[RMDB]
RNA sequence: GGGAACGACUCGAGUAGAGUCGAAAAAAAGAUAUGGAGCUUGUGGAGCUCGGAAAGUACGACGAAGAGCUUCGGAAACGAAGCUCAGAGUAUUUACCGAGCUAUGAAGCAAGCUCCUAAGUCAAAACAAAUAUUGGUAGUUCGCUACCAAUAUUUGAAAAGAAACAACAACAACAAC
Reactivity to DMS in 0.01 (KOAc 150mM, MgCl2 10mM, bicine 150mM(pH8.5), 24C), signal-to-noise 4, nucleotides 027 to 126: a100a070a090g010a040u010a300u000g000g000a020g010c000u000u000g000u000g000g010a010g020c000u000c010g010g000a170a030a050g020u000a000c000g000a190c260g010a130a100g010a010g010c000u010u010c010g000g010a110a100a220c000g010a010a000g000c000u000c000a020g000a110g000u000a010u000u000u000a150c020c000g010a020g020c000u000a060u010g000a110a300g000c000a000a000g000c000u000c000c000u000a000a050g010u020c020a080a080a100a210
Reactivity to 2A3 in 0.01 (KOAc 150mM, MgCl2 10mM, bicine 150mM(pH8.5), 24C), signal-to-noise 2, nucleotides 027 to 126: a000a010a020g020a000u060a030u110g010g000a030g000c000u000u000g010u020g000g040a010g030c010u000c020g000g000a070a020a000g000u030a010c110g220a050c050g000a300a110g000a090g000c000u010u000c010g030g010a070a050a000c010g010a000a000g000c010u000c010a000g000a000g010u000a000u000u000u020a080c010c000g000a000g020c000u030a210u150g010a010a020g010c000a010a000g000c010u000c000c000u000a000a010g000u000c010a040a040a070a100